Chemical mapping of a 177-nucleotide RNA with DMS. Values cover nucleotides 27 to 126. For DMS the reverse transcriptase was MarathonRT.

[RMDB]
RNA sequence: GGGAACGACUCGAGUAGAGUCGAAAAUUGAAAUGCGUGUAGUGGGACAUGACGAUUCCGCAAAAUAGUAUAGCCAUAAUACCUAUAGUUGAAAAAAAUGUUUAGCUUUUAGAGUCAUAGUCAACAAAAUAGUAUCCGUCUUCGGACGGAUACUAUUAAAAGAAACAACAACAACAAC
Reactivity to DMS in 0.01 (KOAc 150mM, MgCl2 10mM, bicine 150mM(pH8.5), 24C), signal-to-noise 1, nucleotides 027 to 126: u010u000g000a060a130a080u000g010c070g040u010g010u010a100g040u030g050g000g040a070c030a010u000g020a090c030g000a170u000u000c040c070g000c070a040a020a080a080u000a040g000u000a040u000a110g010c040c060a050u000a080a070u000a000c070c040u010a080u010a070g000u000u000g000a000a000a020a210a050a060a070u010g030u000u000u010a070g000c040u000u000u000u010a060g000a160g030u000c070a070u000a030g010u010c060a030a030c080a030a020

The data come from the RNA Mapping Database (RMDB), library OK2TST.